Structure probing data (2A3 and DMS) for a 207-nucleotide construct. The 2A3 profile rests on 1,847 reads. Values are in units of 0.01, from 0 to 300, in steps of 10. Conditions: 150 mM KOAc, 10 mM MgCl2 and 150 mM bicine (pH 8.5), 24 C. Reactivities are given for positions 27 through 156.
[RMDB]
RNA sequence: GGGAACGACUCGAGUAGAGUCGAAAAAGUAAGGAGGAGUGUGGAUAAGAAAAAGCUUGCAGUUGGAUGAUGUAAUAAGUAACACUGAGCAAAUAUUUAUUGCCCACCUACCAUGGUCUAUAUCAUGCGAGGCUCUGGAGAUAGGAAAAAUGAAUAACUCAUAUUACCGUUUCGACGGUAAUAUGAGAAAAGAAACAACAACAACAAC
Reactivity to 2A3 in 0.01 (KOAc 150mM, MgCl2 10mM, bicine 150mM(pH8.5), 24C), signal-to-noise 4, nucleotides 027 to 156: a000g080u100a060a030g020g020a020g040g000a090g000u030g040u040g050g010a050u070a140a160g070a060a100a030a020a010g040c050u050u070g030c030a030g040u110u060g030g010a050u050g000a000u040g030u020a050a070u050a180a010g050u030a070a030c050a020c120u060g030a000g040c020a040a080a010u100a050u080u170u050a080u060u070g010c000c010c010a030c010c000u040a060c010c000a010u050g030g000u030c070u090a080u020a050u200c060a020u080g070c070g020a010g000g000c010u000c010u040g040g000a060g030a030u110a020g060g000a050a040a000a090a000u300g030a040a000u300a090a010
Reactivity to DMS in 0.01 (KOAc 150mM, MgCl2 10mM, bicine 150mM(pH8.5), 24C), signal-to-noise 2, nucleotides 027 to 156: a130g020u010a050a040g000g020a080g000g010a050g000u000g040u000g000g020a140u000a080a140g000a030a090a110a110a150g010c040u000u010g000c020a140g050u000u000g010g020a020u010g000a070u010g010u010a060a080u000a050a110g020u000a040a060c050a110c060u000g020a070g010c010a030a030a070u000a090u010u010u000a090u050u010g010c010c120c010a040c030c020u000a100c040c010a060u010g010g030u000c110u000a080u000a090u020c040a070u000g020c140g000a110g010g020c030u000c060u000g000g010a170g020a080u010a100g010g000a010a030a070a080a090u000g020a080a040u020a040a240